RNA sequence: GGGAACGACUCGAGUAGAGUCGAAAAACAUAACCUCUCAUUCAGAAAUUUUGUCAUGAUUUAAUAAAUCAAUUGGCUUGCUUAACCCUUAUUUAAAAAACAAAUCUUUUUUAAUUGGACACAAAUACUCUGGUACUGUGUUCGCACAGUACCAGAGAAAAGAAACAACAACAACAAC
Reactivity to 2A3 in 0.01 (KOAc 150mM, MgCl2 10mM, bicine 150mM(pH8.5), 24C), signal-to-noise 1, nucleotides 027 to 126: a000c020a180u120a060a050c010c000u040c000u000c000a000u030u000c050a070g140a210a300a100u090u220u100u020g090u070c060a020u030g050a050u000u000u050a100a070u050a040a170a000u000c110a060a190u050u080g020g030c000u000u090g000c000u110u120a090a110c050c000c010u030u090a150u170u110u110a010a110a000a000a000a000c050a000a290a120u080c010u000u020u000u000u040u160a000a150u020u000g000g000a020c000a000c000a270a060a000u030a030